Conditions: 150 mM KOAc, 10 mM MgCl2 and 150 mM bicine (pH 8.5), 24 C. This 207-nucleotide RNA was probed chemically with 2A3.
[RMDB]
RNA sequence: GGGAACGACUCGAGUAGAGUCGAAAAGAUUUGUGCUCCAGCCUGGGCAACAGAGUGAGAACUUGUCAAAAAAAAAAAAGUUGACUAAGGCCAGGUGUGUUGGCUGCAGUUGAGCUAUGGUCGCUCCAUUGCACUCUUAUCUGGCCUAGGCAACAGAGUCUGUUGCUGAAUUCGUUCAGCAACAGACAAAAGAAACAACAACAACAAC
Reactivity to 2A3 in 0.01 (KOAc 150mM, MgCl2 10mM, bicine 150mM(pH8.5), 24C), signal-to-noise 2, nucleotides 027 to 156: g020a040u040u070u220g040u040g000c000u050c000c030a040g040c010c020u030g000g040g000c000a080a040c030a070g060a010g030u090g000a060g020a020a030c020u030u040g000u080c100a100a040a000a000a000a000a020a000a000a040a000a000g010u000u000g010a020c010u020a130a100g000g010c000c000a010g000g030u000g010u000g000u070u300g100g080c180u030g000c010a000g000u010u000g000a000g010c010u110a130u300g120g080u170c110g000c000u000c010c020a010u000u000g010c010a020c000u010c000u110u080a000u010c000u000g000g000c010c000u000a000g000g010c000a000a000c000a010g080a030
Notes:
The 2A3 profile rests on 1,048 reads. For 2A3 the reverse transcriptase was SuperScript II with manganese.